[RMDB]
RNA sequence: GGGAACGACUCGAGUAGAGUCGAAAACUAAGGCGAGGCCGGAAGGCGUAGUCGAAGCGCAGCAGGCAGACAUUCCUGCACCGCGAUGGAACCGUCACGACCGACGGGGCGACGGAUUGGGGUGGCUGCCAAAAAUAGUAUUCGUACUAUUUUUGGCAAAAGAAACAACAACAACAAC
Reactivity to 2A3 in 0.01 (KOAc 150mM, MgCl2 10mM, bicine 150mM(pH8.5), 24C), signal-to-noise 7, nucleotides 027 to 126: c030u060a120a000g030g000c020g020a040g040g010c010c010g050g040a070a030g020g020c020g040u050a010g010u010c010g000a010a010g020c030g000c030a060g010c010a010g070g000c020a010g050a190c030a110u110u090c010c000u020g020c030a030c020c040g000c010g020a030u100g060g040a030a030c030c000g010u020c020a030c130g140a100c080c040g040a060c030g000g010g020g010c020g020a050c030g000g050a070u060u100g010g000g000g010u020g010g000c010u000
Reactivity to DMS in 0.01 (KOAc 150mM, MgCl2 10mM, bicine 150mM(pH8.5), 24C), signal-to-noise 8, nucleotides 027 to 126: c050u010a080a140g010g000c010g010a190g000g000c010c020g010g070a130a120g000g010c030g000u000a300g000u010c020g010a130a110g000c060g000c090a090g000c100a080g010g000c130a050g000a080c160a090u020u020c020c000u000g000c120a070c080c010g000c050g010a100u020g010g010a090a110c020c010g000u000c010a100c140g010a140c160c140g000a040c030g000g000g020g000c030g010a130c050g000g000a130u000u000g000g000g000g010u000g000g000c070u000
This 177-nucleotide RNA was probed chemically with 2A3 and DMS. Values are in units of 0.01, from 0 to 300, in steps of 10. The RNA was probed in 150 mM KOAc, 10 mM MgCl2 and 150 mM bicine (pH 8.5) at 24 C. In probing experiments dimethyl sulfate is read out at A N1 and C N3, which are open when not base-paired.